[RMDB]
RNA sequence: GGGAACGACUCGAGUAGAGUCGAAAAGCUGACUGCGGCAAACCCGCUGCCAAUAAGUGGUGACACCGCAGAAGAGGCAGGCGAGGCUAGUAGUGGCGAGCCUCACUGGGUGCCUGAGGCCACCGCAAUUAACUCCCCUGUUCGCAGGGGAGUUAAUAAAAGAAACAACAACAACAAC
Reactivity to DMS in 0.01 (KOAc 150mM, MgCl2 10mM, bicine 150mM(pH8.5), 24C), signal-to-noise 4, nucleotides 027 to 126: g020c000u020g020a160c010u000g010c040g010g000c060a000a180a160c240c000c020g000c060u060g000c190c220a120a060u050a090a060g010u020g000g000u000g000a190c300a220c000c000g000c010a000g000a150a070g020a210g000g000c000a150g010g000c060g010a020g000g000c010u000a070g010u020a110g000u010g030g000c030g010a050g000c000c000u010c000a020c040u000g010g020g050u020g020c010c030u000g020a090g010g010c000c020a070c020c060g000c170a100
Reactivity to 2A3 in 0.01 (KOAc 150mM, MgCl2 10mM, bicine 150mM(pH8.5), 24C), signal-to-noise 5, nucleotides 027 to 126: g030c010u020g100a100c010u010g010c000g010g010c070a010a020a040c010c000c030g010c020u040g050c050c030a120a280u260a270a020g030u010g030g010u030g010a020c010a010c030c000g000c010a000g010a030a010g050a030g030g060c040a010g010g030c050g010a000g000g000c010u020a010g030u030a010g010u140g060g000c020g010a000g000c000c000u010c000a040c040u170g020g020g110u100g000c000c010u080g050a110g010g100c010c010a010c000c010g070c050a040